[RMDB]
RNA sequence: GGGAACGACUCGAGUAGAGUCGAAAACAGUGAUUCACCUUUAAUGGGAGAAAGAUCGCUUAAUUUUACAUGAGGAAGAAGAGGAUUGGUGGAGAUACAGUAGGUGAACAGUUUUUGUAUGAGGAAGUUGAACAUGUGUCAUUCUAAUAGCUUCCAAUACUAUACGUACCUUCGGGUACGUAUAGUAAAAAGAAACAACAACAACAAC
Reactivity to 2A3 in 0.01 (KOAc 150mM, MgCl2 10mM, bicine 150mM(pH8.5), 24C), signal-to-noise 9, nucleotides 027 to 156: c050a000g030u020g060a100u080u070c030a080c010c030u090u130u220a180a160u290g010g000g020a060g060a030a080a010g040a020u050c030g000c040u050u070a110a090u140u150u110u160a090c110a090u160g020a020g040g010a020a030g010a020a010g020a030g030g020a040u050u100g030g010u040g020g020a040g000a020u100a060c040a040g070u090a020g010g040u020g020a040a010c020a020g010u000u020u020u070u090g070u050a120u090g030a050g030g000a010a020g020u050u050g030a040a010c030a060u090g040u020g070u140c040a080u140u020c040u030a090a180u020a180g010c010u010u020c000c000a000a010
Reactivity to DMS in 0.01 (KOAc 150mM, MgCl2 10mM, bicine 150mM(pH8.5), 24C), signal-to-noise 4, nucleotides 027 to 156: c060a070g010u000g010a120u000u000c040a070c000c010u000u000u010a150a130u010g020g010g010a150g020a080a100a130g010a060u010c040g010c040u000u000a070a080u010u010u010u010a100c070a130u010g000a080g010g000a050a060g000a040a080g000a060g000g010a090u000u000g010g040u000g000g010a070g010a110u000a060c070a080g020u010a060g030g020u010g000a040a070c060a080g010u000u000u000u000u000g020u010a060u010g000a130g020g020a040a070g030u000u000g000a060a050c100a070u000g020u010g000u000c060a100u000u000c040u010a050a090u010a130g010c010u000u000c000c010a040a300